The data come from the RNA Mapping Database (RMDB), library OK3TST. Structure probing data (2A3 and DMS) for a 207-nucleotide construct. DMS adducts were read by reverse transcription with MarathonRT. The DMS profile rests on 2,861 reads.
RNA sequence: GGGAACGACUCGAGUAGAGUCGAAAACGCCUUCUAGAUAGCAAUAGCAGAAUUGGUGAGAAUAUUAAAGUCUUUGAUCUCUCUGAGAAAUGCAUAGAAGAAAUAAUGUAAGCUGUCCCCUCUCUCUCUCUGCCUCGGCUACCAAACAGGGAAGGGAAUUAAUAGGUCAGUUCGCUGACCUAUUAAUAAAAGAAACAACAACAACAAC
Reactivity to 2A3 in 0.01 (KOAc 150mM, MgCl2 10mM, bicine 150mM(pH8.5), 24C), signal-to-noise 2, nucleotides 027 to 156: c060g020c010c000u020u030c020u030a110g010a250u140a030g050c070a070a150u140a140g030c030a050g030a180a140u100u100g020g050u030g010a040g010a070a060u150a100u250u280a210a150a080g040u040c100u040u110u120g120a060u020c010u000c000u000c020u100g010a030g050a080a150a020u070g000c000a020u010a050g030a030a000g020a060a120a040u120a060a020u170g060u090a070a040g020c100u030g040u100c020c000c000c000u040c000u010c000u000c000u000c000u030c010u000g060c000c000u040c080g080g000c000u080a150c050c030a040a050a030c050a000g020g020g010a010a020g000g000g000a000
Reactivity to DMS in 0.01 (KOAc 150mM, MgCl2 10mM, bicine 150mM(pH8.5), 24C), signal-to-noise 1, nucleotides 027 to 156: c070g000c040c000u000u000c020u010a060g010a070u000a080g020c030a040a120u000a070g010c030a050g000a090a130u000u000g050g030u000g000a040g000a070a100u000a060u000u000a020a110a160g010u000c060u000u000u020g000a070u000c000u000c020u000c090u010g000a110g000a050a070a100u010g030c040a130u000a080g000a100a080g010a100a080a120u000a070a080u000g010u000a010a070g010c010u000g000u000c010c000c010c040u000c050u000c000u010c050u000c020u010c020u000g010c030c040u000c090g010g020c040u010a070c030c040a030a040a100c080a030g000g030g030a020a060g000g020g000a040
The 2A3 profile rests on 907 reads.